Source: RMDB library OK2TRN, as collected in RNAgym.
This 177-nucleotide RNA was probed chemically with 2A3 and DMS.
The 2A3 profile rests on 1,457 reads.
RNA sequence: GGGAACGACUCGAGUAGAGUCGAAAAAGCGUACAGGCGCUGGCCUAGAUCUCGAUCAGUGCGGCCGAUGCGCAGAGUACGCGGUACGUACCAUGAGUACGCGCGCUGCGCAUGCACUAGUCAUCAGAACGACCGUUACAUUCGUGUAACGGUCGUUAAAAGAAACAACAACAACAAC
Reactivity to 2A3 in 0.01 (KOAc 150mM, MgCl2 10mM, bicine 150mM(pH8.5), 24C), signal-to-noise 1, nucleotides 027 to 126: a070g040c020g010u070a100c080a130g220g080c020g000c040u010g030g000c030c000u130a130g030a200u000c070u100c220g070a080u030c050a020g000u010g010c050g120g000c110c100g040a040u050g000c000g000c010a000g000a020g030u080a030c020g000c000g000g020u040a020c000g000u000a040c010c050a270u220g050a010g090u000a010c020g000c010g000c010g000c120u040g020c010g010c000a020u090g000c010a010c010u050a050g010u040c010a060u050c010a110g010
Reactivity to DMS in 0.01 (KOAc 150mM, MgCl2 10mM, bicine 150mM(pH8.5), 24C), signal-to-noise 3, nucleotides 027 to 126: a040g000c040g010u000a080c260a160g010g000c020g020c030u000g000g020c010c020u010a110g030a100u010c040u010c140g030a030u000c110a020g020u000g000c050g010g000c110c100g000a090u010g010c010g000c010a080g000a170g020u000a180c030g000c000g010g030u020a100c020g000u000a060c050c050a140u000g000a250g020u000a000c000g000c030g010c030g000c000u010g000c020g010c030a020u000g020c030a040c060u000a090g010u000c040a060u000c110a100g010
DMS adducts were read by reverse transcription with MarathonRT. 2A3 adducts were read by reverse transcription with SuperScript II with manganese.